RNA sequence: GGGAACGACUCGAGUAGAGUCGAAAAGAUAUGGACUCGAUUGUGACAUGCGUGUGACCUCGGAAACGAGGUCCACGCAACAGCACACUGUCGAGUCCUAAGUCAAACAUCAUGUUCGCAUGAUGAAGUUAGGUUUAAUGUUCGCAUUAAACCUAACAAAAGAAACAACAACAACAAC
Reactivity to DMS in 0.01 (KOAc 150mM, MgCl2 10mM, bicine 150mM(pH8.5), 24C), signal-to-noise 8, nucleotides 027 to 126: g010a040u010a300u010g010g000a020c000u000c000g010a020u000u010g020u000g020a200c110a230u010g010c010g040u000g000u020g020a000c000c000u000c010g000g000a070a110a190c010g020a020g000g000u000c000c000a010c000g020c000a000a010c220a150g020c150a080c020a030c220u000g010u000c000g010a020g010u000c000c000u000a000a070g000u000c030a160a140a300c010a000u000c010a010u000g010u000u010c270g010c010a010u000g000a020u000g010a090a120
Reactivity to 2A3 in 0.01 (KOAc 150mM, MgCl2 10mM, bicine 150mM(pH8.5), 24C), signal-to-noise 8, nucleotides 027 to 126: g030a020u050a020u110g000g000a000c000u000c010g010a010u020u050g020u020g060a100c150a240u300g000c010g010u030g280u300g010a000c000c010u000c000g010g020a060a040a030c020g000a000g000g000u000c000c000a000c000g010c000a000a000c010a000g110c020a010c000a000c020u020g000u020c010g010a000g000u000c000c000u010a010a000g010u000c020a050a040a100c010a010u010c000a000u010g050u070u100c300g020c170a000u020g010a010u020g080a090a010